[RMDB]
RNA sequence: GGGAACGACUCGAGUAGAGUCGAAAACCAUAAGAGGAUAACAGCUAAAGGGAAUGGAUAGUAUGCUUCAGUUCUUCUACUUCUUCUCUUUAAUUAAAAUUGCAAAUCACUGGGAUAAUUAAAAAACUCACUACCAAUACUUCGGUAUUGGUAGUGAAAAAGAAACAACAACAACAAC
Reactivity to 2A3 in 0.01 (KOAc 150mM, MgCl2 10mM, bicine 150mM(pH8.5), 24C), signal-to-noise 4, nucleotides 027 to 126: c010c000a040u090a090a100g060a000g040g010a050u060a210a070c010a040g030c070u030a010a000a040g030g010g040a030a060u110g070g030a010u010a060g070u280a050u100g090c040u100u120c030a040g040u090u040c000u040u020c000u000a060c040u040u000c000u030u000c000u000c000u000u050u080a030a050u100u190a080a120a070a080u080u080g030c020a050a040a090u080c040a120c130u060g010g020g040a070u130a150a080u130u300a070a140a050a000a000a000c030
Reactivity to DMS in 0.01 (KOAc 150mM, MgCl2 10mM, bicine 150mM(pH8.5), 24C), signal-to-noise 1, nucleotides 027 to 126: c000c000a110u010a070a050g000a200g000g030a000u000a050a150c070a150g000c030u030a030a000a060g000g000g000a030a040u140g000g000a020u020a020g000u050a050u050g010c050u050u040c170a170g000u000u020c030u000u000c040u020a020c060u000u020c020u000u000c010u010c000u000u000u000a040a080u000u040a000a100a030a140u010u030g000c140a040a040a030u000c090a060c230u010g000g030g000a130u070a050a060u000u050a000a000a060a070a090a040c090